RNA sequence: GGGAACGACUCGAGUAGAGUCGAAAAUGUGAGGAGGGCCUCAAACAAGCUCCUCACACGAGAAACCCGGCUAGUCCUGGUGCGGCUUGCAUCGCGCCGCCGCACCUGGGCAACAUCAUCGAAUUGCUGGAAACCCCUAAAGCUCUUGGUACCAACCCGUGGGUAUAAUGUUCGCAUUAUACCCACGAAAAGAAACAACAACAACAAC
Reactivity to 2A3 in 0.01 (KOAc 150mM, MgCl2 10mM, bicine 150mM(pH8.5), 24C), signal-to-noise 2, nucleotides 027 to 156: u030g010u010g000a000g020g000a000g030g070g060c070c060u160c160a100a120a060c090a080a030g040c000u000c000c000u000c000a000c000a000c010g110a130g080a070a080a000c000c010c020g040g000c070u030a020g000u000c000c010u010g000g000u020g000c000g060g000c040u120u220g000c060a050u300c100g090c160g000c040c080g000c000c020g000c000a010c000c000u000g010g000g000c000a000a000c000a020u100c000a010u080c020g040a250a110u150u090g030c010u000g030g020a070a100a120c030c000c000c000u100a180a170a050g020c010u010c040u120u020g030g010u090a190c000c040a040a070c040c030